[RMDB]
RNA sequence: GGGAACGACUCGAGUAGAGUCGAAAAUGCAUGAUUUGAUGCUUGAACUGGAUCAUGAAGGAUAAGCAAGAUUUUGGCAGCAAGUGAGAGGGAGAGAGGAGUUUGUCAGAGGAAUGGAACAAGUCAGGAGGCAGUAAUGUGUACGGCACUCCAAGGAACCCAUUACCUACUUCGGUAGGUAAUGGGUAAAAGAAACAACAACAACAAC
Reactivity to DMS in 0.01 (KOAc 150mM, MgCl2 10mM, bicine 150mM(pH8.5), 24C), signal-to-noise 2, nucleotides 027 to 156: u000g020c030a060u020g020a130u000u010u040g040a080u000g010c030u000u010g000a080a060c040u010g000g020a060u010c030a060u030g000a120a090g010g000a110u010a030a080g030c060a100a110g010a170u000u010u000u000g000g030c070a030g020c070a060a070g020u010g000a080g030a110g010g010g000a100g010a050g020a060g000g000a020g040u000u000u000g040u000c020a100g020a100g000g040a090a040u000g000g020a050a070c040a030a090g040u000c030a130g020g030a070g000g000c040a070g010u000a070a080u010g000u010g050u000a020c050g030g010c020a040c000u000c000c060a050a100g000g000a090
Reactivity to 2A3 in 0.01 (KOAc 150mM, MgCl2 10mM, bicine 150mM(pH8.5), 24C), signal-to-noise 4, nucleotides 027 to 156: u080g000c020a020u020g040a160u060u060u130g040a030u070g060c060u070u070g030a090a090c060u030g030g000a010u050c020a040u110g030a070a020g030g010a060u070a140a040g030c070a050a040g020a100u040u080u120u130g070g000c050a020g020c030a080a050g040u080g040a060g030a060g020g010g020a080g000a000g010a000g040g010a060g010u040u090u070g050u020c010a010g010a020g030g060a040a060u140g000g010a050a040c010a060a040g080u130c050a040g000g060a010g020g000c000a000g000u060a030a130u190g070u060g040u090a030c020g000g000c020a020c100u000c010c030a000a020g070g040a030
An RNA of 207 nucleotides, treated with DMS and 2A3 and read out base by base. For 2A3 the reverse transcriptase was SuperScript II with manganese. The DMS profile rests on 3,118 reads.